Conditions: 150 mM KOAc, 10 mM MgCl2 and 150 mM bicine (pH 8.5), 24 C. The record gives the reactivity of an RNA of 177 nucleotides to DMS and 2A3. For 2A3 the reverse transcriptase was SuperScript II with manganese. Values cover nucleotides 27 to 126. For DMS the reverse transcriptase was MarathonRT.

RNA sequence: GGGAACGACUCGAGUAGAGUCGAAAACCUUCCGCGUCACGGAGUGCCGUGACCGGGGGUAACCCUGGCCGGGCACAGGCCCACCUGGGUUAGCCCGCCUGAGAAUGCAUACAUGCUACGAUGAGGGAGGUAGAUUGGUUUUCGAACCAAUCUACCUAAAAGAAACAACAACAACAAC
Reactivity to DMS in 0.01 (KOAc 150mM, MgCl2 10mM, bicine 150mM(pH8.5), 24C), signal-to-noise 3, nucleotides 027 to 126: c010c000u000u020c020c000g000c220g000u000c000a000c000g000g000a300g040u010g030c030c020g010u000g000a000c010c000g010g000g000g020g000u020a040a060c000c000c000u010g000g020c160c110g040g010g000c000a100c140a100g100g010c030c040c020a200c180c160u030g000g010g000u000u000a080g000c000c000c000g000c010c030u020g000a140g010a150a060u040g000c020a050u040a150c130a130u030g000c010u000a080c110g010a070u010g010a100g000g000g030
Reactivity to 2A3 in 0.01 (KOAc 150mM, MgCl2 10mM, bicine 150mM(pH8.5), 24C), signal-to-noise 5, nucleotides 027 to 126: c020c000u260u180c030c000g020c120g020u000c000a020c000g000g040a160g230u210g300c000c000g020u010g010a020c000c000g000g000g010g000g020u030a030a040c010c000c020u020g020g010c100c160g030g000g000c040a090c080a210g100g050c000c000c000a060c010c030u060g010g000g000u010u010a000g080c000c000c020g030c010c010u050g040a100g070a130a090u130g030c020a030u080a170c050a090u160g020c040u060a080c100g090a060u140g050a090g020g050g030